RNA sequence: GGGAACGACUCGAGUAGAGUCGAAAAGAUAUGGAGCGGCACAGGAGCUCUGUGUCGGAAACGACACUGAGCGAGAAACUGUGCGCUCCUAAGUCAAAUCUGGGCAAGACUUCGGUCUUGCCCAGAACAUGACUGUGAAGUUCGCUUCACAGUCAUGAAAAGAAACAACAACAACAAC
Reactivity to DMS in 0.01 (KOAc 150mM, MgCl2 10mM, bicine 150mM(pH8.5), 24C), signal-to-noise 2, nucleotides 027 to 126: g000a010u000a020u010g000g000a020g010c000g030g020c010a000c010a020g000g020a040g020c000u000c000u000g010u000g010u000c000g030g000a000a010a010c010g020a010c000a000c000u000g010a020g030c000g020a150g020a180a080a240c010u000g020u000g000c000g000c000u000c000c000u010a000a050g010u000c000a120a140a180u000c000u010g000g010g030c000a020a020g000a020c010u000u010c270g030g010u000c010u000u010g000c010c000c000a000g000a000a110
Reactivity to 2A3 in 0.01 (KOAc 150mM, MgCl2 10mM, bicine 150mM(pH8.5), 24C), signal-to-noise 2, nucleotides 027 to 126: g010a000u010a000u020g010g000a000g000c070g300g060c120a000c010a010g030g010a080g020c010u000c010u010g010u000g010u000c000g000g000a010a000a000c000g010a000c000a000c010u020g010a000g010c020g020a120g250a080a170a000c010u010g000u000g000c000g010c000u010c000c000u000a010a000g000u000c020a000a050a240u000c010u000g010g000g000c010a020a020g000a020c010u050u200c300g040g000u000c010u010u010g010c000c000c000a010g000a000a000
Annotation: Chemical mapping of a 177-nucleotide RNA with DMS and 2A3. DMS adducts were read by reverse transcription with MarathonRT. The RNA was probed in 150 mM KOAc, 10 mM MgCl2 and 150 mM bicine (pH 8.5) at 24 C. Reactivities are given for positions 27 through 126. For 2A3, 6,997 sequencing reads were counted.